[RMDB]
RNA sequence: GGGAACGACUCGAGUAGAGUCGAAAAGAUAUGGAAUGUUGCCACGAUGAAAUGGUCACGAAUUUAUAGCAGUUCGGAAACGAACUGCUAUAAACUAUGACCAUGGAGUGGAUAACAUUCCUAAGUCCAAGAUGACCAUGUUCGCAUGGUCAUCUUGAAAAGAAACAACAACAACAAC
Reactivity to DMS in 0.01 (KOAc 150mM, MgCl2 10mM, bicine 150mM(pH8.5), 24C), signal-to-noise 2, nucleotides 027 to 126: g000a070u010a270u030g010g000a010a000u000g000u000u000g000c000c000a020c000g000a160u010g000a120a190a010u000g000g010u000c000a030c160g010a060a170u000u000u000a010u000a010g020c000a020g020u000u000c010g020g030a090a100a170c010g000a010a010c000u000g000c010u010a000u000a000a010a030c160u010a220u000g000a010c010c000a000u000g010g000a020g030u010g000g010a030u010a010a010c010a000u010u000c000c000u000a070a100g010u000c050